[RMDB]
RNA sequence: GGGAACGACUCGAGUAGAGUCGAAAAGGAUCUGGAGAGCACUCCCGGCCGUAUGGUCGAGUGUCCCCCCGGAGGGAGAGAACCACGCGGAGAAGGCGGAAAAAUCACCUCCAGAGGACCCCUUCAGGGUCCGAUAUACGUUCGCGUAUAUCGGACCAAAAGAAACAACAACAACAAC
Reactivity to 2A3 in 0.01 (KOAc 150mM, MgCl2 10mM, bicine 150mM(pH8.5), 24C), signal-to-noise 1, nucleotides 027 to 126: g020g010a060u000c020u020g000g010a010g020a040g030c030a030c050u060c030c060c000g020g000c030c000g180u290a110u270g010g030u050c030g020a030g060u150g170u050c030c000c000c010c050c060g100g040a130g050g020g010a100g000a010g000a110a000c010c010a030c030g020c010g010g040a140g030a140a030g140g000c020g010g000a020a160a000a040a040u090c030a030c030c000u000c000c000a010g010a000g000g040a030c010c000c000c020u020u060c040a040g100
Reactivity to DMS in 0.01 (KOAc 150mM, MgCl2 10mM, bicine 150mM(pH8.5), 24C), signal-to-noise 2, nucleotides 027 to 126: g010g020a090u000c010u000g000g000a040g000a160g030c100a100c060u000c090c030c050g020g030c000c000g030u000a050u000g030g010u000c020g000a100g000u010g000u000c000c000c010c020c050c090g000g000a060g010g000g000a140g010a110g000a060a100c060c070a090c020g040c010g010g000a190g000a070a160g000g010c070g000g000a020a070a050a100a130u010c070a110c040c000u000c010c010a070g010a060g010g010a160c080c010c020c130u000u000c100a100g010